[RMDB]
RNA sequence: GGGAACGACUCGAGUAGAGUCGAAAAGACCCCUGUACCCAUAACUGGGGUGGAGAUCACGGUCAAGGAAAGGGUUAGAUCAAGGGCAGGAGGAGGAAGAGGGGAGAAAGACAGAGCUUCUGGCUGGCAGGGCCUAGAGCAGAAUGAUGGUAGGAGAAUGUGAUAGUUAGUUCGCUAACUAUCACAUAAAAGAAACAACAACAACAAC
Reactivity to 2A3 in 0.01 (KOAc 150mM, MgCl2 10mM, bicine 150mM(pH8.5), 24C), signal-to-noise 2, nucleotides 027 to 156: g070a010c010c000c000c030u030g090u140a120c000c010c010a080u090a290a110c130u130g020g030g010g010u030g030g020a070g010a050u060c050a050c180g060g000u050c040a050a020g040g000a060a100a020g070g000g000u080u060a020g020a040u070c070a080a100g010g000g060c010a010g030g020a030g020g020a040g040g050a020a040g010a010g020g010g010g010a040g040a050a030a000g060a030c060a010g080a030g010c060u130u110c050u100g020g040c000u010g030g030c040a050g040g030g000c010c020u060a050g000a020g010c040a030g040a090a060u100g020a020u050g060g000u020a010g040g050a060g060a090